RNA sequence: GGGAACGACUCGAGUAGAGUCGAAAAUGAGGGAUGGCGAGCGAAGUUCCACGGCUGAGUGAGGGAUGGAGGAUGGGAGUGAGCAGCGGUUGAGUGAGGGAUGGCGCAUUGUCAGAACUAAGAUUCCAUCUGAACUACUAGAGUGAGGGAUGGUUCAGGAGCAUUCAUUAUUCGUAAUGAAUGCUCCAAAAGAAACAACAACAACAAC
Reactivity to 2A3 in 0.01 (KOAc 150mM, MgCl2 10mM, bicine 150mM(pH8.5), 24C), signal-to-noise 2, nucleotides 027 to 156: u190g030a070g100g000g000a050u090g040g030c140g050a040g000c120g000a100a030g050u070u000c050c040a040c040g100g050c030u110g010a010g010u110g040a040g010g030g030a050u070g020g010a050g040g010a000u150g010g070g000a050g010u060g040a080g010c040a000g000c000g110g000u150u140g030a030g050u080g000a040g020g040g070a100u070g000g020c070g010c150a130u000u080g030u020c020a030g000a180a040c050u190a180a100g000a130u070u110c020c020a010u060c030u030g070a020a030c020u070a030c030u030a020g040a020g270u050g030a010g020g000g020a020u020g010g000u040u030c040a030
Structure probing data (2A3) for a 207-nucleotide construct.
Reactivities are rounded to 0.1 and cut off at 0 and 3.
The RNA was probed in 150 mM KOAc, 10 mM MgCl2 and 150 mM bicine (pH 8.5) at 24 C.